Record summary
The record gives the reactivity of an RNA of 177 nucleotides to DMS and 2A3. It was measured as part of the RMDB library OK1LIB. DMS adducts were read by reverse transcription with MarathonRT. For 2A3 the reverse transcriptase was SuperScript II with manganese.
[RMDB]
RNA sequence: GGGAACGACUCGAGUAGAGUCGAAAAUUCAUGGAGACCCAUCCCACACUGGAUGCCGUACACUGUGACAUCGGCAAUGCCACUGAGUUUUACAAAAUAUUCCAAGAUGAGAUUAGGGAGGUGUCACGCUCGCAUACUAUUUCGAUAGUAUGCGAGCAAAAGAAACAACAACAACAAC
Reactivity to DMS in 0.01 (KOAc 150mM, MgCl2 10mM, bicine 150mM(pH8.5), 24C), signal-to-noise 2, nucleotides 027 to 126: u040u010c020a050u040g000g030a000g010a030c010c020c050a090u010c010c000c040a090c250a170c050u010g000g000a040u000g000c000c110g050u050a140c130a120c100u080g010u000g010a040c000a080u000c030g000g050c060a020a040u010g020c010c010a040c080u000g020a070g000u000u000u000u000a090c050a100a030a060a100u000a040u000u060c000c030a040a050g020a050u000g000a060g000a040u020u030a100g000g000g030a150g020g020u040g020u000c070a040c070
Reactivity to 2A3 in 0.01 (KOAc 150mM, MgCl2 10mM, bicine 150mM(pH8.5), 24C), signal-to-noise 4, nucleotides 027 to 126: u050u020c030a020u060g010g020a020g020a020c020c000c010a040u040c010c000c010a120c000a010c060u080g060g020a040u050g010c000c010g070u070a040c100a030c090u120g020u040g050a010c000a020u030c030g030g040c000a030a080u110g010c000c000a040c060u030g010a010g080u020u020u020u050a080c060a020a120a030a070u190a080u020u050c010c010a020a050g060a120u140g020a040g040a110u020u200a090g000g040g000a040g020g010u010g010u010c000a000c040